[RMDB]
RNA sequence: GGGAACGACUCGAGUAGAGUCGAAAAGAAAAGAAAGAAAAGGCUACAGCGACCGGUGAAAGAACAACGAAAAGAACCGCUGAGGAUGCCAUCACCGAAAAGAAAAAGAAAAAGAAAAGAAAAGAAACAUCCUAUAUACCUUCGGGUAUAUAGGAUGAAAAGAAACAACAACAACAAC
Reactivity to 2A3 in 0.01 (KOAc 150mM, MgCl2 10mM, bicine 150mM(pH8.5), 24C), signal-to-noise 1, nucleotides 027 to 126: g040a000a140a000a000g030a040a100a000g060a000a260a010a010g000g000c010u030a010c000a050g020c010g020a000c000c000g020g000u000g010a180a140a050g080a050a070c060a030a020c010g060a040a230a090a060g040a050a070c090c020g000c090u010g000a000g130g000a030u080g020c030c040a030u030c000a030c020c010g090a010a100a070a030g060a010a030a020a020a010g110a090a190a000a000a000g100a000a060a000a000g020a000a170a000a000g120a090a060a000
Reactivity to DMS in 0.01 (KOAc 150mM, MgCl2 10mM, bicine 150mM(pH8.5), 24C), signal-to-noise 1, nucleotides 027 to 126: g000a160a070a090a100g010a060a090a160g040a070a000a080a180g000g000c030u000a090c040a060g000c070g020a120c130c100g000g000u000g030a060a100a120g020a180a150c100a060a110c080g000a050a080a120a070g000a040a110c160c090g010c030u000g000a040g000g000a050u010g000c080c010a090u000c070a060c050c020g000a000a050a110a170g010a020a030a000a070a070g010a030a030a020a030a100g000a070a020a000a060g000a030a040a030a060g000a100a110a100
This 177-nucleotide RNA was probed chemically with 2A3 and DMS.
Reactivities are given for positions 27 through 126.
The reactions ran in a buffer of 150 mM KOAc, 10 mM MgCl2 and 150 mM bicine (pH 8.5), at 24 C.
The data come from the RNA Mapping Database (RMDB), library OK1LIB.
Values are in units of 0.01, from 0 to 300, in steps of 10.